[RMDB]
RNA sequence: GGGAACGACUCGAGUAGAGUCGAAAAGAAGACAAUGUUUCUUCUCCUAAGAUAGGAAGGGGAUAGGUGCAGAGACUCAAUGGAAGCUAUUCUAACGAAUGAAUCUCAUUUGGUCCAAUACUGUAGUUACUGUAGUUAUAGAACGAUCUAUUUACACGACCGCUGUAAAGUUCGCUUUACAGCGGUCAAAAGAAACAACAACAACAAC
Reactivity to 2A3 in 0.01 (KOAc 150mM, MgCl2 10mM, bicine 150mM(pH8.5), 24C), signal-to-noise 2, nucleotides 027 to 156: g050a080a020g010a050c090a180a300u160g040u000u120u040c010u000u000c030u060c020c010u170a170a060g050a040u210a020g000g070a040a040g020g000g010g020a000u030a070g000g000u030g020c040a000g040a000g010a030c010u010c100a000a080u000g000g010a020a010g020c040u120a100u070u080c060u130a080a010c070g040a000a000u100g010a010a050u040c070u010c200a040u040u030u110g010g000u010c030c000a030a070u040a130c050u020g050u100a100g060u060u050a050c040u040g020u070a000g010u050u090a090u000a040g010a040a040c040g000a040u050c010u020a060u050u120u060a010c020a000c080

An RNA of 207 nucleotides, treated with 2A3 and read out base by base. For 2A3, 534 sequencing reads were counted. For 2A3 the reverse transcriptase was SuperScript II with manganese. The RNA was probed in 150 mM KOAc, 10 mM MgCl2 and 150 mM bicine (pH 8.5) at 24 C.